[RMDB]
RNA sequence: GGGAACGACUCGAGUAGAGUCGAAAAGGAACAGUUAGAACUAACAACAAGCUUAUUCAAGCUGAAGUUAUGACUACAGAAGAACUCACCGAAUCGGCAAUUUAUGACGGUGACCGUUUAAUGGAAACUGGUGAAUUGGUUACAAUGACAGGUGAUAUAGGAUGAUUCAGUUCGCUGAAUCAUCCUAAAAAGAAACAACAACAACAAC
Reactivity to DMS in 0.01 (KOAc 150mM, MgCl2 10mM, bicine 150mM(pH8.5), 24C), signal-to-noise 1, nucleotides 027 to 156: g000g040a130a110c110a030g020u000u000a050g000a200a120c190u030a100a080c050a100a140c190a170a090g020c030u010u020a300u000u030c140a060a000g000c000u010g000a030a250g000u000u020a040u000g000a190c020u000a110c030a070g000a120a100g020a050a130c020u000c000a050c030c000g060a060a040u000c070g000g020c040a070a090u000u000u000a050u000g010a050c070g010g000u000g000a090c130c000g000u000u000u000a110a060u010g050g030a110a120a080c000u000g000g030u000g000a080a090u000u000g000g000u000u000a050c000a000a110u000g020a130c020a060g030g060u000g010a040u000a280
Reactivity to 2A3 in 0.01 (KOAc 150mM, MgCl2 10mM, bicine 150mM(pH8.5), 24C), signal-to-noise 2, nucleotides 027 to 156: g090g000a090a010c030a030g020u120u110a040g030a080a010c060u020a010a010c040a020a040c060a200a000g010c010u050u120a080u260u300c080a060a000g000c040u100g030a060a000g010u040u030a050u050g010a020c050u060a030c140a010g060a010a010g050a140a020c030u060c040a030c020c020g000a040a030u130c050g030g050c050a080a040u000u100u160a020u100g060a040c000g000g000u000g010a010c020c000g030u050u090u150a040a060u100g000g000a000a000a150c000u000g050g020u010g030a000a060u080u000g010g030u070u010a040c010a010a000u040g030a020c040a100g020g050u020g000a030u050a030